[RMDB]
RNA sequence: GGGAACGACUCGAGUAGAGUCGAAAAAGAUGGCAGGUUCACCCCGUACGGUGCGGAAGUUCGCGCUUCCGUGAAACGCGAAAGUCGGACGGUGGCUGCAAGUCGCAUCGCAAAACCGCGGCAAGUGUUAACCUGGACCUCUUCGGAGGUCCAGGAAUCUAUUACUAACGUUCGCGUUAGUAAUAGAAAAAGAAACAACAACAACAAC
Reactivity to DMS in 0.01 (KOAc 150mM, MgCl2 10mM, bicine 150mM(pH8.5), 24C), signal-to-noise 2, nucleotides 027 to 156: a040g000a090u000g000g000c000a100g030g010u000u020c030a150c030c000c000c020g020u010a020c000g010g010u000g010c040g050g060a080a080g020u000u000c240g010c290g020c000u000u000c000c070g030u000g000a050a090a060c020g000c040g000a100a140a120g040u000c060g020g030a060c040g020g030u000g050g020c040u000g000c040a030a080g000u000c030g020c030a130u000c010g040c080a140a070a080a130c100c090g000c030g010g020c030a100a140g020u030g000u000u000a090a110c000c010u000g010g020a010c000c000u020c000u000u000c300g020g000a060g030g020u000c000c000a010g010g000a010a000
Reactivity to 2A3 in 0.01 (KOAc 150mM, MgCl2 10mM, bicine 150mM(pH8.5), 24C), signal-to-noise 3, nucleotides 027 to 156: a000g110a080u190g050g010c010a010g000g080u150u170c010a020c000c010c020c020g020u050a020c050g000g040u070g030c000g000g010a020a010g030u090u230c080g000c020g000c090u000u010c010c010g020u010g010a080a090a010c100g020c020g110a120a010a060g080u100c040g020g020a080c100g020g010u020g000g000c010u000g000c020a010a030g010u020c030g010c050a060u060c050g030c100a010a040a050a070c030c010g000c010g040g000c070a100a080g050u040g040u240u140a040a040c000c000u000g010g000a000c000c000u000c010u030u030c150g060g000a000g000g010u000c000c000a000g000g010a000a000
The data come from the RNA Mapping Database (RMDB), library M2RFPK.
The record gives the reactivity of an RNA of 207 nucleotides to DMS and 2A3.
For 2A3 the reverse transcriptase was SuperScript II with manganese.
For DMS the reverse transcriptase was MarathonRT.